[RMDB]
RNA sequence: GGGAACGACUCGAGUAGAGUCGAAAAUCUGGAGGAUCAAGAAGGCGGAGUCUGAUGAAGCAAGACUCGGCUGAUACAAUCCUCCUAGAGAAAGGGGUCAGAGAGAGCAGCCCUGCCUGGAGCACUGGAAGUGCAUUUACUUCGGUAAAUGCACUUCAAAAGAAACAACAACAACAAC
Reactivity to DMS in 0.01 (KOAc 150mM, MgCl2 10mM, bicine 150mM(pH8.5), 24C), signal-to-noise 7, nucleotides 027 to 126: u000c020u010g010g010a010g000g010a000u000c090a110a140g020a200a300g000g000c000g010g010a020g010u000c010u000g010a160u040g020a160a150g020c150a160a020g000a010c000u000c000g010g020c000u000g010a080u030a120c300a090a020u000c000c000u000c000c010u030a010g000a040g000a080a080a080g000g000g010g020u020c050a060g020a100g000a080g000a060g010c070a150g010c010c020c010u000g000c040c010u000g000g000a070g010c080a060c120u020g010
Reactivity to 2A3 in 0.01 (KOAc 150mM, MgCl2 10mM, bicine 150mM(pH8.5), 24C), signal-to-noise 9, nucleotides 027 to 126: u020c010u010g000g000a000g010g000a000u040c070a070a090g050a040a030g070g010c100g060g010a000g010u000c010u020g090a150u210g130a160a060g130c110a080a010g010a000c000u000c020g070g000c010u010g000a020u020a150c030a020a000u000c000c000u000c000c000u000a000g010a000g020a020a060a020g030g010g020g000u090c090a010g030a020g010a010g000a010g150c060a010g020c010c000c010u010g010c000c010u040g040g020a060g040c050a040c100u070g050